[RMDB]
RNA sequence: GGGAACGACUCGAGUAGAGUCGAAAAUCACAAAGUUGAGCCCCAGAACCAGGCCUCAUUUUCCUCCAGACUCUUCCCCAGGACAGUGCAUCUCACAUUUUGGGGAGUAGGUGAGAGGGCCCACCAGCCUCAUGUGCUGUGGGUUCCGCGUUCGGGACUUUUAAAAUCCAUUCGUGGAUUUUAAAAGAAAAGAAACAACAACAACAAC
Reactivity to DMS in 0.01 (KOAc 150mM, MgCl2 10mM, bicine 150mM(pH8.5), 24C), signal-to-noise 1, nucleotides 027 to 156: u010c020a150c070a160a050a200g000u000u000g010a060g050c010c020c010c050a120g020a050a090c030c050a180g000g000c030c000u040c040a010u000u000u010u000c010c000u000c030c030a180g020a060c050u000c030u010u000c010c000c010c020a080g010g000a010c060a120g020u000g000c140a190u000c070u000c020a090c020a150u030u000u010u010g000g040g010g060a060g000u000a020g060g040u000g010a080g010a080g010g020g010c030c020c000a020c100c090a120g050c010c000u010c100a150u000g020u000g040c020u000g030u000g020g030g020u000u000c010c010g000c100g000u010u000c050g020g020g050a140
Reactivity to 2A3 in 0.01 (KOAc 150mM, MgCl2 10mM, bicine 150mM(pH8.5), 24C), signal-to-noise 1, nucleotides 027 to 156: u120c010a050c030a060a150a030g080u020u010g030a040g050c000c030c000c030a090g000a010a030c050c020a040g110g000c030c040u140c090a090u100u120u190u080c000c000u050c020c010a170g050a300c010u010c050u120u100c010c000c000c000a010g020g020a010c050a080g000u040g020c050a160u090c070u060c100a010c000a010u030u050u030u020g010g010g010g000a000g020u040a040g000g020u040g010a120g020a020g000g000g000c000c000c000a010c030c050a030g020c020c000u250c180a140u260g080u160g030c000u050g000u020g030g000g000u120u070c020c010g000c020g000u020u010c020g000g070g000a010

Source: RMDB library OK3TST, as collected in RNAgym.
An RNA of 207 nucleotides, treated with DMS and 2A3 and read out base by base.
The reactions ran in a buffer of 150 mM KOAc, 10 mM MgCl2 and 150 mM bicine (pH 8.5), at 24 C.
As a SHAPE reagent, 2A3 marks flexible, mostly unpaired nucleotides at the ribose 2'-OH.
The 2A3 profile rests on 522 reads.